[RMDB]
RNA sequence: GGGAACGACUCGAGUAGAGUCGAAAACUCACUCACUACGGUGAGUGAGAAUGCUUAAGCCUCAAUAAAGCUUGGUUUGAGUGCCUCAAGCAGAUAUAGACUGAAACAUUUAGUAUGACCAAGCAGGGAGCAACGGCUCGAGUACGCUCGAGCCGAAACUCAUUACGUAUUUCGAUACGUAAUGAGUAAAAGAAACAACAACAACAAC
Reactivity to DMS in 0.01 (KOAc 150mM, MgCl2 10mM, bicine 150mM(pH8.5), 24C), signal-to-noise 2, nucleotides 027 to 156: c000u000c000a040c000u010c020a060c010u000a110c300g110g050u000g000a050g030u000g020a020g040a040a030u000g010c020u000u000a090a090g000c000c000u000c030a060a090u000a060a120a150g000c000u020u000g000g020u000u000u000g020a090g020u000g000c080c010u000c080a260a090g020c020a120g010a170u000a180u000a150g000a140c050u000g050a160a090a080c060a070u010u000u000a070g030u000a090u000g000a030c020c020a040a010g010c030a180g000g000g000a120g020c020a050a210c030g000g010c020u060c000g000a000g030u000a130c290g060c030u000c010g010a000g000c000c000g010a020a050
Reactivity to 2A3 in 0.01 (KOAc 150mM, MgCl2 10mM, bicine 150mM(pH8.5), 24C), signal-to-noise 4, nucleotides 027 to 156: c000u000c000a000c000u000c010a000c010u030a040c260g060g000u000g000a000g010u000g000a000g000a040a040u040g000c000u020u030a040a030g020c000c000u040c020a060a070u070a170a130a020g010c020u020u010g020g020u020u010u070g030a020g020u150g040c020c010u060c050a010a030g010c040a020g100a030u130a030u070a110g130a050c060u090g080a050a140a010c030a030u100u180u090a090g050u070a110u200g030a030c000c000a000a000g000c020a020g060g060g020a080g030c060a040a110c010g000g020c000u010c010g020a010g000u030a050c250g020c090u000c000g010a000g000c000c000g000a000a000